[RMDB]
RNA sequence: GGGAACGACUCGAGUAGAGUCGAAAACGGAGUCAGGUUAGUAGGCAGUGUCAGGAGAUUGACUUGCAUGAUCUUUUCGAGGGCGUGAGGGAGGUUCAGAUGGUACUUGAUCUCCACGGGUCCGUUGGUGGAGAUGUCAAUGGCUUGCAGGGUUCCGUGACUAACACACAUUCGUGUGUGUUAGUCAAAAAGAAACAACAACAACAAC
Reactivity to 2A3 in 0.01 (KOAc 150mM, MgCl2 10mM, bicine 150mM(pH8.5), 24C), signal-to-noise 4, nucleotides 027 to 156: c040g000g020a010g040u050c050a060g010g080u030u130a030g040u070a060g020g050c040a030g050u050g020u130c050a020g040g060a030g050a110u040u060g050a060c010u040u060g010c040a090u100g020a090u070c020u040u140u050u080c040g010a090g010g000g010c050g050u060g020a090g020g000g000a040g000g030u050u070c020a040g000a030u100g050g050u040a100c020u050u050g000a020u020c020u030c020c000a010c010g020g000g080u090c090c060g080u070u060g040g000u000g020g010a020g010a030u030g000u000c030a050a060u070g060g030c070u030u090g020c050a050g010g000g040u050u020c010c030g020
Reactivity to DMS in 0.01 (KOAc 150mM, MgCl2 10mM, bicine 150mM(pH8.5), 24C), signal-to-noise 2, nucleotides 027 to 156: c030g000g020a080g020u000c080a080g020g000u000u000a080g010u010a090g020g000c060a070g020u000g020u000c040a090g010g020a090g000a080u000u000g010a040c080u000u000g030c030a120u010g000a100u000c020u000u000u000u000c080g010a110g010g000g000c050g010u000g000a160g030g010g000a060g000g020u000u000c080a070g020a140u000g010g040u000a090c100u000u000g000a080u000c010u000c010c010a040c040g030g000g010u000c040c090g020u010u000g050g010u000g000g000a080g000a040u000g020u000c040a050a100u000g000g020c090u010u010g010c040a060g000g010g010u000u010c010c010g010

Chemical mapping of a 207-nucleotide RNA with 2A3 and DMS. 2A3 adducts were read by reverse transcription with SuperScript II with manganese. Conditions: 150 mM KOAc, 10 mM MgCl2 and 150 mM bicine (pH 8.5), 24 C. It was measured as part of the RMDB library OK3TST.